[RMDB]
RNA sequence: GGGAACGACUCGAGUAGAGUCGAAAACAAGAAUGCGUUUUAACAACGUAUCCUUUCCACAUACUAUUUGCAUUGCACAGCGAUAGUAUGGAUGGGACAUUGGUAUUUACAGUACUAAUGCAAAUACAUCGGCUAGGCAUUUCGAUGCCUAGCCGAUAAAAGAAACAACAACAACAAC
Reactivity to DMS in 0.01 (KOAc 150mM, MgCl2 10mM, bicine 150mM(pH8.5), 24C), signal-to-noise 1, nucleotides 027 to 126: c300a010a050g060a050a000u010g000c010g000u000u000u090u010a010a190c280a030a060c010g040u000a000u000c000c000u000u000u000c000c060a010c070a000u000a050c000u000a000u000u000u070g020c050a060u010u050g050c300a150c300a050g000c000g000a000u000a050g050u000a000u000g000g000a040u010g000g000g000a160c000a000u020u000g000g060u000a000u010u030u020a150c290a090g000u000a000c000u000a000a000u000g000c070a040a020a180u060a080c170
Reactivity to 2A3 in 0.01 (KOAc 150mM, MgCl2 10mM, bicine 150mM(pH8.5), 24C), signal-to-noise 3, nucleotides 027 to 126: c010a050a050g050a050a040u080g000c030g000u000u000u020u160a070a120c080a000a000c000g000u030a020u010c000c000u000u010u010c000c000a000c030a020u000a020c010u020a010u040u090u300g030c030a100u120u160g140c130a060c080a140g000c010g020a000u000a000g060u000a000u030g030g000a030u050g020g000g000a000c000a000u000u000g000g000u000a030u130u130u010a100c090a030g000u020a030c000u020a010a010u030g020c070a010a010a060u170a020c070